[RMDB]
RNA sequence: GGGAACGACUCGAGUAGAGUCGAAAAGCGGCCGCAAUCUCGAGGAUUAGGCCCAGCCGCGGCUCGUCGAUUCCCGUUGCCUUGGCCAGCCGCUUGAAUUCACGAACCCCCAGUCCGCCGCUGCGUAAGUGGUUAUUCUCUUCGGAGAAUAACCACUAAAAGAAACAACAACAACAAC
Reactivity to DMS in 0.01 (KOAc 150mM, MgCl2 10mM, bicine 150mM(pH8.5), 24C), signal-to-noise 1, nucleotides 027 to 126: g040c040g040g010c040c020g020c160a100a030u010c030u020c060g020a100g000g010a070u000u000a170g010g000c030c000c070a110g020c110c060g040c070g000g000c000u000c150g000u000c030g000a150u000u000c000c000c000g000u000u010g040c070c010u000u000g000g010c030c090a110g000c020c040g010c020u000u000g000a080a110u010u000c070a110c140g020a090a300c020c000c020c050c020a130g000u000c030c020g010c050c040g000c020u000g010c080g000u000a080

This 177-nucleotide RNA was probed chemically with DMS. Values are in units of 0.01, from 0 to 300, in steps of 10. The reactions ran in a buffer of 150 mM KOAc, 10 mM MgCl2 and 150 mM bicine (pH 8.5), at 24 C.